[RMDB]
RNA sequence: GGGAACGACUCGAGUAGAGUCGAAAAGAUAUGGAGCGACCCAGGUUGCCAGCAGCGUUGAAAUCGGAAACGAUGGAGCUGGGCACUCCUGCGCUCCUAAGUCAAAACCUAGACUUCGGUCUAGGAACUUGAAUAUUACCUUCGGGUAAUAUUCAAGAAAAGAAACAACAACAACAAC
Reactivity to DMS in 0.01 (KOAc 150mM, MgCl2 10mM, bicine 150mM(pH8.5), 24C), signal-to-noise 4, nucleotides 027 to 126: g020a050u000a300u010g000g000a020g020c010g010a200c180c300c040a020g000g000u010u010g010c000c010a180g020c010a020g010c020g010u010u030g000a090a130a010u000c010g000g000a120a090a220c000g000a010u010g000g010a100g020c000u000g010g010g000c010a020c160u000c010c000u010g020c020g010c000u000c000c000u000a020a040g010u000c050a100a100a090a150c000c000u000a000g000a020c000u000u020c170g040g000u000c000u000a010g000g010a020a050
Reactivity to 2A3 in 0.01 (KOAc 150mM, MgCl2 10mM, bicine 150mM(pH8.5), 24C), signal-to-noise 3, nucleotides 027 to 126: g000a000u070a030u160g000g000a000g010c000g020a110c200c130c000a000g010g000u010u040g040c030c020a110g190c020a010g000c300g300u300u060g040a070a070a020u010c020g000g030a050a090a050c010g000a000u030g000g030a020g000c000u000g000g030g000c000a010c090u060c000c010u020g030c010g000c000u000c000c000u030a150a020g030u020c040a000a030a040a210c000c000u000a010g000a000c000u040u030c300g070g000u020c000u000a000g010g000a010a030
Chemical mapping of a 177-nucleotide RNA with DMS and 2A3. For DMS the reverse transcriptase was MarathonRT. Values cover nucleotides 27 to 126. For 2A3, 5,715 sequencing reads were counted. For 2A3 the reverse transcriptase was SuperScript II with manganese. The reactions ran in a buffer of 150 mM KOAc, 10 mM MgCl2 and 150 mM bicine (pH 8.5), at 24 C.